Structure probing data (DMS and 2A3) for a 177-nucleotide construct. Source: RMDB library TTRDES, as collected in RNAgym. As a SHAPE reagent, 2A3 marks flexible, mostly unpaired nucleotides at the ribose 2'-OH. The reactions ran in a buffer of 150 mM KOAc, 10 mM MgCl2 and 150 mM bicine (pH 8.5), at 24 C.
RNA sequence: GGGAACGACUCGAGUAGAGUCGAAAAGAUAUGGAGUACAUGAGCAACAGCUAUGUGUCGGAAACGACACUGUAGACAUGCUCAGUACUCCUAAGUCAAACUGUGGGACUGUUCGCAGUCCCACAGAGUCUCUCUAGUGGUUCGCCACUAGAGAGACAAAAGAAACAACAACAACAAC
Reactivity to DMS in 0.01 (KOAc 150mM, MgCl2 10mM, bicine 150mM(pH8.5), 24C), signal-to-noise 2, nucleotides 027 to 126: g000a000u000a050u010g000g010a000g000u000a030c010a090u000g010a020g010c000a150a180c210a180g000c000u000a030u020g030u000g010u010c000g000g000a030a020a070c010g020a010c000a000c010u010g030u000a000g000a040c080a140u050g030c000u000c000a040g000u010a000c010u000c000c000u010a010a030g000u000c010a180a090a250c020u000g010u010g010g000g000a020c000u010g010u010u010c250g010c020a000g010u000c000c000c000a000c000a000g000a150
Reactivity to 2A3 in 0.01 (KOAc 150mM, MgCl2 10mM, bicine 150mM(pH8.5), 24C), signal-to-noise 3, nucleotides 027 to 126: g000a000u020a000u070g010g040a010g000u020a010c300a300u050g000a010g010c120a100a300c110a300g010c020u030a010u050g020u000g010u020c000g000g000a020a000a000c000g000a000c020a010c020u040g060u000a000g020a010c100a240u300g000c000u000c000a000g020u000a000c000u000c000c000u000a000a000g000u010c010a050a080a150c000u010g000u010g000g000g040a010c000u000g020u140u110c300g030c200a000g000u020c000c000c000a000c000a000g000a010